[RMDB]
RNA sequence: GGGAACGACUCGAGUAGAGUCGAAAAUCUUUUAUCUAAAAUGCAUGUCGAGUCUAACUCAAAAGAGUGGAACUAUUGUGUUGGACUACACAAUGAGAUAAACCUUUGUGACGAUCCUGAAAUCGUUCUUGAGAAACUGUUAGCUCUUAUUGCAUUCACAUUAUUGUCAAUUCGUUGACAAUAAUGUAAAAGAAACAACAACAACAAC
Reactivity to 2A3 in 0.01 (KOAc 150mM, MgCl2 10mM, bicine 150mM(pH8.5), 24C), signal-to-noise 9, nucleotides 027 to 156: u030c010u030u110u080u100a140u070c040u090a130a150a020a020u020g000c000a010u020g030u130c040g020a010g050u050c020u020a010a010c010u020c130a030a030a050a040g160a050g030u080g020g020a050a050c010u010a020u010u010g040u000g050u060u080g080g090a060c070u080a010c030a000c000a000a030u110g040a040g020a090u140a080a090a080c010c010u020u040u080g090u070g020a020c020g020a060u040c020c100u140g070a110a090a020u010c020g030u050u030c020u050u110g070a090g050a050a130a050c090u080g010u030u010a000g000c000u000c010u080u200a060u030u020g000c000a000u020u030c000
Reactivity to DMS in 0.01 (KOAc 150mM, MgCl2 10mM, bicine 150mM(pH8.5), 24C), signal-to-noise 5, nucleotides 027 to 156: u000c010u000u000u000u000a090u020c070u010a080a060a080a090u000g020c020a030u000g020u000c230g020a050g000u020c040u000a030a040c020u000c030a060a050a070a130g000a100g020u000g010g010a150a260c050u000a050u000u000g010u010g010u000u010g050g020a170c090u000a110c010a010c010a030a040u000g000a100g000a050u000a080a130a050c020c030u000u000u000g010u010g030a060c010g000a060u000c040c040u010g000a050a050a020u000c020g020u000u000c050u000u000g020a220g010a110a090a110c090u010g000u000u000a060g010c010u000c030u000u000a070u010u000g000c010a090u000u010c050
Notes:
This 207-nucleotide RNA was probed chemically with 2A3 and DMS. It was measured as part of the RMDB library OK3TST. The DMS profile rests on 15,458 reads. Reactivities are given for positions 27 through 156.